[RMDB]
RNA sequence: GGGAACGACUCGAGUAGAGUCGAAAACUCACUCACUACGGUGAGUGAGAAUCUUAAGGCUCAAUAAAGCUUGCCUUGAGGUCCCUCAAGCAGAUAUAGACUGAAACAUUUAGUAUGUUCAAGCAGGGAGCAACGGCUCGAGUACGCUCGAGCCGAAGAGCACUAAUCAGUUCGCUGAUUAGUGCUCAAAAGAAACAACAACAACAAC
Reactivity to 2A3 in 0.01 (KOAc 150mM, MgCl2 10mM, bicine 150mM(pH8.5), 24C), signal-to-noise 1, nucleotides 027 to 156: c010u020c000a010c000u000c000a000c000u020a010c270g070g000u020g000a000g000u000g000a000g010a000a030u010c000u000u000a000a000g000g030c000u010c130a090a040u240a290a100a020g150c150u120u130g000c000c000u000u020g010a000g020g000u010c000c030c000u060c040a090a060g000c040a010g050a000u120a050u140a200g060a030c060u030g010a030a020a150c040a010u050u110u090a150g050u140a060u060g060u070u000c080a080a000g000c020a020g000g000g070a100g010c050a040a040c010g000g000c000u000c010g000a050g000u030a040c130g040c050u020c000g000a000g000c000c000g000a000a000
This 207-nucleotide RNA was probed chemically with 2A3. 2A3 adducts were read by reverse transcription with SuperScript II with manganese. Conditions: 150 mM KOAc, 10 mM MgCl2 and 150 mM bicine (pH 8.5), 24 C.